[RMDB]
The record gives the reactivity of an RNA of 177 nucleotides to DMS and 2A3. Source: RMDB libraries RFM100 and RFMREP, as collected in RNAgym. The RNA was probed in 150 mM KOAc, 10 mM MgCl2 and 150 mM bicine (pH 8.5) at 24 C.
RNA sequence: GGGAACGACUCGAGUAGAGUCGAAAAGGGGUAAGCCUGUGUACCAUAAGGGAGACAACCCAGCGCCGGGUUAAGGUCCCAAAGUGUGGAUUAAGUGCGAUCGAAGGUGGUCCCGAGCCCUAGACAGCAGCAUAUUUAGUUUCGACUAAAUAUGCUGAAAAGAAACAACAACAACAAC
Reactivity to DMS in 0.01 (KOAc 150mM, MgCl2 10mM, bicine 150mM(pH8.5), 24C), signal-to-noise 9, nucleotides 027 to 126: g010g010g010g020u020a190a140g010c020c010u010g010u020g020u020a120c050c010a030u020a110a250g000g000g000a050g010a090c090a040a020c010c000c000a140g020c110g000c100c080g010g000g020u000u000a090a090g010g010u000c000c000c010a050a070a100g010u000g020u010g010g000a090u020u010a060a080g000u020g000c060g000a060u010c060g010a130a080g020g010u010g010g010u010c010c000c020g000a110g010c010c010c010u010a090g000a080c190a090g020
Reactivity to 2A3 in 0.01 (KOAc 150mM, MgCl2 10mM, bicine 150mM(pH8.5), 24C), signal-to-noise 9, nucleotides 027 to 126: g040g010g010g020u080a070a030g020c010c010u060g040u040g040u090a070c010c000a030u060a080a100g010g050g020a050g030a050c090a060a020c060c000c010a050g090c100g050c100c090g010g000g010u020u030a080a020g050g050u020c000c000c010a030a060a010g120u120g030u050g030g070a080u100u140a140a040g050u060g110c050g050a060u090c040g050a090a010g020g030u060g020g050u060c010c000c000g010a020g020c000c000c000u070a100g050a080c030a050g040